[RMDB]
RNA sequence: GGGAACGACUCGAGUAGAGUCGAAAACCGUAAGGGUGUGUACAGAGGGCGACACCUGCCCAGUGCUGGCACGUGAAGCUGGAGUUCAGUUCAGUGAAGCGCCAGUAAACGGCGGGGGUAACUAUAAAACUAAAAUACUAUUCGUAGUAUUUUAGUUAAAAGAAACAACAACAACAAC
Reactivity to 2A3 in 0.01 (KOAc 150mM, MgCl2 10mM, bicine 150mM(pH8.5), 24C), signal-to-noise 8, nucleotides 027 to 126: c010c000g010u040a090a100g090g020g000u030g000u010g000u020a020c030a020g080a050g040g030g010c030g020a020c010a020c030c000u010g010c010c010c010a020g000u000g000c000u010g000g000c070a050c190g040u030g050a080a010g000c000u010g010g010a020g020u210u260c120a090g020u040u010c000a010g000u070g180a100a000g000c000g000c010c000a000g000u010a050a090a000c020g000g000c000g000g000g000g000g010u030a050a010c060u060a030u120a230a140
Reactivity to DMS in 0.01 (KOAc 150mM, MgCl2 10mM, bicine 150mM(pH8.5), 24C), signal-to-noise 9, nucleotides 027 to 126: c020c010g010u040a070a080g000g010g010u000g010u010g010u000a050c050a070g000a070g010g000g020c110g010a060c060a070c010c010u000g010c010c010c070a200g010u010g010c010u000g000g000c010a060c070g010u000g010a180a300g000c000u000g000g000a030g010u020u030c260a150g010u000u000c010a030g010u000g010a180a240g000c030g010c000c000a000g000u010a030a130a120c210g000g000c000g000g000g000g000g020u010a050a100c090u020a090u010a050a080
The record gives the reactivity of an RNA of 177 nucleotides to 2A3 and DMS. The reactions ran in a buffer of 150 mM KOAc, 10 mM MgCl2 and 150 mM bicine (pH 8.5), at 24 C. For DMS the reverse transcriptase was MarathonRT. Values cover nucleotides 27 to 126. As a SHAPE reagent, 2A3 marks flexible, mostly unpaired nucleotides at the ribose 2'-OH.